[RMDB]
RNA sequence: GGGAACGACUCGAGUAGAGUCGAAAAGCUCAAAAUGCUGAACUUAUGGCUGUGAUAACAGUGUUAAAAACUUUUAAACAGCCAAUAAACACUGUUUCUGAUUCAGCCUAUGUAGUGCAAGCCACACAAAAUAUUGAAUGUGCCUUAAUUCAAAAUAAUUUUAUUUUACUUUCGAGUAAAAUAAAAUAAAAGAAACAACAACAACAAC
Reactivity to 2A3 in 0.01 (KOAc 150mM, MgCl2 10mM, bicine 150mM(pH8.5), 24C), signal-to-noise 1, nucleotides 027 to 156: g010c000u020c130a050a050a030a030u170g050c000u030g000a120a040c010u060u000a040u160g010g000c000u010g000u040g050a040u050a110a000c000a000g020u020g090u010u010a050a060a000a000a030c020u000u080u080u160a050a120a020c050a020g000c020c020a000a020u000a000a040a000c010a000c010u000g020u000u120u000c040u050g100a120u080u120c010a000g020c000c000u060a070u060g060u130a040g020u050g010c040a050a010g000c030c010a010c000a000c010a070a080a090a100u160a100u020u060g040a030a020u110g010u040g020c000c000u070u020a140a090u130u100c090a060a300a000a070u300a060
Source information: This 207-nucleotide RNA was probed chemically with 2A3. Values cover nucleotides 27 to 156. The RNA was probed in 150 mM KOAc, 10 mM MgCl2 and 150 mM bicine (pH 8.5) at 24 C. 2A3 adducts were read by reverse transcription with SuperScript II with manganese. The 2A3 profile rests on 589 reads.